[RMDB]
RNA sequence: GGGAACGACUCGAGUAGAGUCGAAAACUUCGGAUGCCCAGGUCGGACCGCGAGGAGGUGGAGAUGCCAUGCCGACCCGAAGAGGAAAGAAGGACGCGAGACGGUGAACCUGUGAGUGGAAGCCCGCCUAAUCCAAGAAGUUCGCUUCUUGGAUUAGAAAAGAAACAACAACAACAAC
Reactivity to 2A3 in 0.01 (KOAc 150mM, MgCl2 10mM, bicine 150mM(pH8.5), 24C), signal-to-noise 2, nucleotides 027 to 126: c000u070u040c030g070g030a040u110g020c000c000c010a030g050g040u040c020g040g050a060c010c030g010c050g060a090g050g010a020g030g030u060g010g040a110g030a040u120g020c040c000a060u100g010c020c010g020a030c000c010c020g070a090a020g030a040g040g010a080a040a000g050a000a010g030g020a020c040g010c020g030a030g020a020c020g000g030u070g010a010a020c010c000u080g020u040g080a040g030u070g000g040a030a010g030c000c010c020g000c000
Reactivity to DMS in 0.01 (KOAc 150mM, MgCl2 10mM, bicine 150mM(pH8.5), 24C), signal-to-noise 3, nucleotides 027 to 126: c040u000u010c040g010g010a100u010g010c040c000c020a090g000g010u010c040g010g010a110c080c100g040c100g000a090g010g010a070g020g030u000g010g010a130g000a100u010g010c040c020a090u000g030c030c010g000a080c050c000c020g010a070a060g010a120g000g000a050a050a090g000a080a070g000g000a070c090g010c070g010a060g000a070c070g000g000u000g010a060a080c040c030u000g000u020g010a070g010u010g000g010a120a140g010c020c020c020g030c170